[RMDB]
RNA sequence: GGGAACGACUCGAGUAGAGUCGAAAAAGAGGGUCUAGAGUGGACCUCCAGCAAACUCCAACAGACCUGCAGCUGAGGGUCCUGACUGUUAGAAGGAAAACUAACAAACAGAAAGGACAUCCACACACAUGAGCAUGCCUUUCGAGGCAUGCUCAUGAAAAGAAACAACAACAACAAC
Reactivity to DMS in 0.01 (KOAc 150mM, MgCl2 10mM, bicine 150mM(pH8.5), 24C), signal-to-noise 1, nucleotides 027 to 126: a200g000a160g000g010g010u000c010u010a180g000a090g010u000g000g000a210c040c040u000c070c060a140g000c070a010a050a070c110u010c000c070a190a200c120a150g000a010c050c000u000g000c090a060g010c100u000g000a000g000g010g000u000c000c010u000g000a300c070u000g000u000u000a050g000a120a110g000g010a040a020a170a150c070u000a060a170c210a000a040a070c150a000g000a000a250a010g010g000a090c010a100u000c010c010a010c160a050c300a110

Structure probing data (DMS) for a 177-nucleotide construct. For DMS, 397 sequencing reads were counted. DMS adducts were read by reverse transcription with MarathonRT. It was measured as part of the RMDB library OK2TST. The RNA was probed in 150 mM KOAc, 10 mM MgCl2 and 150 mM bicine (pH 8.5) at 24 C.